Record summary:
The record gives the reactivity of an RNA of 177 nucleotides to DMS and 2A3.
RNA sequence: GGGAACGACUCGAGUAGAGUCGAAAAUCUAUCACCAGCCCAUGUUUACGACACGAAUGGGCUGUUGCAAAUUACGUAUAGCUCUUGCAACAUCGUCUCGAAACGUUCCCAAGCUAUACGCCACAAAUCAUUGUGAGAAGUUCGCUUCUCACAAUGAAAAAGAAACAACAACAACAAC
Reactivity to DMS in 0.01 (KOAc 150mM, MgCl2 10mM, bicine 150mM(pH8.5), 24C), signal-to-noise 3, nucleotides 027 to 126: u000c140u020a140u010c080a130c170c070a060g000c000c000c000a020u000g010u000u010u000a080c160g020a070c220a090c160g010a230a050u000g010g020g000c000u000g000u000u020g010c080a010a080a130u000u000a070c030g000u000a000u010a000g000c010u010c170u020u000g010c040a040a080c100a070u000c030g030u000c020u000c020g000a050a120a080c010g040u000u000c000c000c000a150a030g000c000u000a000u000a010c010g000c250c100a060c140a020a060a100
Reactivity to 2A3 in 0.01 (KOAc 150mM, MgCl2 10mM, bicine 150mM(pH8.5), 24C), signal-to-noise 5, nucleotides 027 to 126: u010c010u060a140u140c040a020c090c020a010g000c000c000c000a010u030g130u130u180u110a170c160g050a040c040a000c190g140a120a020u000g000g040g000c010u000g000u000u010g000c000a000a040a120u200u080a050c020g000u000a000u000a010g000c010u030c030u110u090g020c010a030a030c000a170u030c020g030u010c010u010c020g030a080a040a040c000g000u000u000c000c000c000a000a000g000c010u000a010u000a010c010g030c040c030a120c020a040a070a020
It was measured as part of the RMDB library M2PK90. DMS adducts were read by reverse transcription with MarathonRT. For DMS, 1,933 sequencing reads were counted. The 2A3 profile rests on 6,482 reads. High DMS reactivity at an A or C suggests that its Watson-Crick edge is free.